[RMDB]
RNA sequence: GGGAACGACUCGAGUAGAGUCGAAAAAGCUGAUGGAGAAGCAUGCCUGGGAGGCACUGCGCCAGACCGUCGCCGUCAAAGCCCGCAACCACGCCGAGGCCAAGAAGCGCGCGAUAGAGCGGCAGGAACGUUGUAAAGGGUUCGCCCUUUACAACGUAAAAGAAACAACAACAACAAC
Reactivity to DMS in 0.01 (KOAc 150mM, MgCl2 10mM, bicine 150mM(pH8.5), 24C), signal-to-noise 4, nucleotides 027 to 126: a090g030c060u000g010a100u000g000g000a070g010a130a100g000c060a070u000g000c010c010u000g000g020g010a180g010g010c040a040c120u000g010c040g010c080c040a090g000a130c080c020g000u000c030g010c040c000g020u000c050a080a130a160g000c010c020c020g010c060a080a090c110c090a060c170g020c070c050g030a120g020g010c010c050a050a130g000a090a170g010c050g040c150g000c030g010a080u000a090g000a110g020c020g000g030c020a050g000g020a130
Reactivity to 2A3 in 0.01 (KOAc 150mM, MgCl2 10mM, bicine 150mM(pH8.5), 24C), signal-to-noise 2, nucleotides 027 to 126: a000g060c080u080g010a080u090g030g030a100g060a190a000g010c040a030u070g000c000c010u070g080g120g070a090g020g000c040a020c120u080g010c030g030c010c000a030g040a100c000c020g050u050c000g000c020c020g000u040c000a060a020a060g010c000c020c040g030c010a030a110c040c040a080c050g000c050c030g030a110g030g000c000c030a040a030g020a050a030g050c030g000c000g010c010g060a010u090a100g080a020g000c010g000g020c010a000g080g050a070

This 177-nucleotide RNA was probed chemically with DMS and 2A3. The reactions ran in a buffer of 150 mM KOAc, 10 mM MgCl2 and 150 mM bicine (pH 8.5), at 24 C. For DMS the reverse transcriptase was MarathonRT. DMS (dimethyl sulfate) methylates the pairing face of unpaired adenines and cytosines.